[RMDB]
RNA sequence: GGGAACGACUCGAGUAGAGUCGAAAACACACAACCCAUUGCGUGUGUGCGACCAUAUUGAAACGGUGGCAGGGUUUCCUGAACGCGAUAUGGAGCUACGCCAGUCUGGGAAAUCAGUCAUGGUUACCGUGCACUUUUGUUUCGACAAAAGUGCACGAAAAGAAACAACAACAACAAC
Reactivity to 2A3 in 0.01 (KOAc 150mM, MgCl2 10mM, bicine 150mM(pH8.5), 24C), signal-to-noise 3, nucleotides 027 to 126: c050a010c030a000c010a110a220c000c020c050a090u040u240g060c180g040u020g000u000g050u050g040c000g010a190c010c020a020u040a070u040u170g060a180a050a030c110g060g030u080g110g000c030a060g070g000g000u130u190u160c000c000u010g020a060a000c010g040c000g040a010u020a090u160g020g020a020g030c000u100a060c020g000c030c030a010g060u070c040u030g000g000g020a010a060a010u070c030a000g090u040c030a140u060g140g000u030u030a110c020
Reactivity to DMS in 0.01 (KOAc 150mM, MgCl2 10mM, bicine 150mM(pH8.5), 24C), signal-to-noise 1, nucleotides 027 to 126: c100a000c070a020c090a140a120c070c020c110a130u040u070g000c140g050u000g000u000g020u000g020c060g050a080c010c020a110u020a000u000u000g000a020a090a090c050g040g050u000g000g010c010a050g000g000g010u010u010u040c000c000u020g020a120a190c100g000c050g000a000u040a170u000g000g000a300g000c060u030a180c060g000c010c010a060g040u100c050u000g030g000g010a050a010a010u010c040a040g000u000c100a110u000g000g000u000u000a030c120
Record summary: An RNA of 177 nucleotides, treated with 2A3 and DMS and read out base by base. For 2A3 the reverse transcriptase was SuperScript II with manganese. Conditions: 150 mM KOAc, 10 mM MgCl2 and 150 mM bicine (pH 8.5), 24 C. The 2A3 profile rests on 1,639 reads. For DMS the reverse transcriptase was MarathonRT.